[RMDB]
Chemical mapping of a 207-nucleotide RNA with 2A3. Values cover nucleotides 27 to 156. For 2A3, 626 sequencing reads were counted.
RNA sequence: GGGAACGACUCGAGUAGAGUCGAAAAUGCAGGCAAGAGACCACCGUAAGCGUCGCUGCAACCAAUUAAGCGCCGAUUCUCAUCAGCGCGAGUACGCUCUCGCUGCCUAAGCGAAGCGUCUCUGUCGGCCCGGGAUAUGCCCUCGGUCCCGGUGCCGCUAUGUCAGCCUCUUCGGAGGCUGACAUAGAAAAGAAACAACAACAACAAC
Reactivity to 2A3 in 0.01 (KOAc 150mM, MgCl2 10mM, bicine 150mM(pH8.5), 24C), signal-to-noise 1, nucleotides 027 to 156: u050g000c000a040g140g000c060a130a110g090a000g000a160c000c060a060c060c100g170u230a100a070g000c040g070u020c000g020c030u000g060c040a060a040c010c000a040a160u200u180a140a010g000c000g000c030c000g050a020u180u080c120u150c200a080u020c030a010g000c030g000c000g000a000g010u080a020c000g000c020u040c020u020c060g000c000u020g080c000c130u140a060a010g020c000g010a000a000g010c010g030u000c000u020c000u050g060u000c000g000g000c000c000c000g000g000g000a000u050a010u120g030c000c010c000u080c020g100g000u010c000c000c000g000g060u110g030c000c000g000